[RMDB]
RNA sequence: GGGAACGACUCGAGUAGAGUCGAAAACUUGGCGGCCGCCCAACUCUCGCACCAUCCCGGGUUAAUGUAAAUAAACUUGGUAUUGCCCAACACUUUCCCGCGUGUCGCGUGUGGUUCAUGUGUGUGCGAACGAUCGACGAUUCGUCGUCGAUCGUUCAAAAGAAACAACAACAACAAC
Reactivity to 2A3 in 0.01 (KOAc 150mM, MgCl2 10mM, bicine 150mM(pH8.5), 24C), signal-to-noise 1, nucleotides 027 to 126: c000u050u050g060g020c030g000g000c030c000g000c020c020c000a000a100c000u030c000u010c020g000c000a010c000c000a020u090c000c000c000g000g000g010u040u050a160a000u160g140u190a100a090a120u190a070a120a030c020u030u030g000g000u130a030u180u150g080c000c000c000a000a000c030a010c050u000u040u070c000c000c030g000c060g020u020g060u060c030g050c080g020u000g030u050g000g110u050u120c050a060u040g050u000g000u000g030u030g130c010